[RMDB]
RNA sequence: GGGAACGACUCGAGUAGAGUCGAAAAGGGCCGACGCUGGUGCAGAUAAACCUGCAGGUAGGUGACACCCCAUUAAGGGCGCAGGCCGCCACCGCGGGCAUCGAUGAUCUGCGACCCGCACUGAUCAUGGUGAACAUGAAUUCGUUCAUGUUCACCAAAAAGAAACAACAACAACAAC
Reactivity to DMS in 0.01 (KOAc 150mM, MgCl2 10mM, bicine 150mM(pH8.5), 24C), signal-to-noise 5, nucleotides 027 to 126: g010g010g000c030c010g010a080c090g010c040u000g000g030u010g000c060a040g010a050u000a060a150a130c070c000u000g010c010a050g020g020u010a030g050g000u000g000a090c110a160c110c000c000c040a110u030u060a100a190g010g010g000c080g010c180a070g010g000c010c010g000c030c020a060c110c090g000c050g000g000g040c150a090u020c100g010a180u070g000a060u010c010u030g000c000g000a070c000c010c020g000c050a130c160u020g010a020u020c060a120
Reactivity to 2A3 in 0.01 (KOAc 150mM, MgCl2 10mM, bicine 150mM(pH8.5), 24C), signal-to-noise 6, nucleotides 027 to 126: g020g010g030c020c010g010a050c040g020c040u050g020g030u020g020c000a000g000a040u100a030a120a030c010c010u010g000c040a120g080g040u170a100g000g020u040g040a030c010a110c020c030c000c010a020u220u250a100a220g040g000g000c080g000c060a030g030g050c040c010g010c000c000a050c010c040g010c000g010g010g000c030a070u090c070g140a120u130g070a070u040c020u060g020c020g090a130c000c000c010g010c020a030c060u090g030a130u130c080a080